Structure probing data (2A3 and DMS) for a 177-nucleotide construct. The DMS profile rests on 6,116 reads. The 2A3 profile rests on 13,683 reads. For DMS the reverse transcriptase was MarathonRT. For 2A3 the reverse transcriptase was SuperScript II with manganese. High 2A3 reactivity points to a flexible backbone, as in loops and unpaired stretches.
RNA sequence: GGGAACGACUCGAGUAGAGUCGAAAAGAUAUGGAGUGAUGCGCGAUAAGAACCGAUCGGAAACGAUCGAAGUUCUUUUGACGCUAUCACUCCUAAGUCAAAAUCGCAGACCUUCGGGUCUGCGAAACCAGUAAUAGAGGUUCGCCUCUAUUACUGGAAAAGAAACAACAACAACAAC
Reactivity to 2A3 in 0.01 (KOAc 150mM, MgCl2 10mM, bicine 150mM(pH8.5), 24C), signal-to-noise 4, nucleotides 027 to 126: g000a000u030a000u080g000g000a010g000u000g010a000u010g020c050g000c040g140a180u130a300a030g000a000a000c000c010g000a000u000c000g000g010a070a010a010c020g000a000u000c010g020a020a040g000u000u020c020u030u050u030u170g050a040c000g000c020u030a010u020c000a000c000u020c000c000u000a010a000g010u010c010a020a020a030a300u040c010g000c010a000g000a010c010c000u060u140c300g140g000g000u000c010u010g000c000g000a000a000a010
Reactivity to DMS in 0.01 (KOAc 150mM, MgCl2 10mM, bicine 150mM(pH8.5), 24C), signal-to-noise 4, nucleotides 027 to 126: g000a020u000a200u010g000g000a030g010u000g010a010u000g000c010g030c010g020a070u010a010a010g010a010a010c010c010g010a010u000c000g020g000a050a030a070c000g010a000u000c000g000a070a100g010u000u000c000u000u000u010u000g000a090c000g000c000u010a020u000c000a010c000u000c000c000u000a000a060g000u000c020a080a080a100a150u000c000g010c000a010g010a020c000c000u000u020c250g030g000g000u000c000u010g000c010g000a010a030a080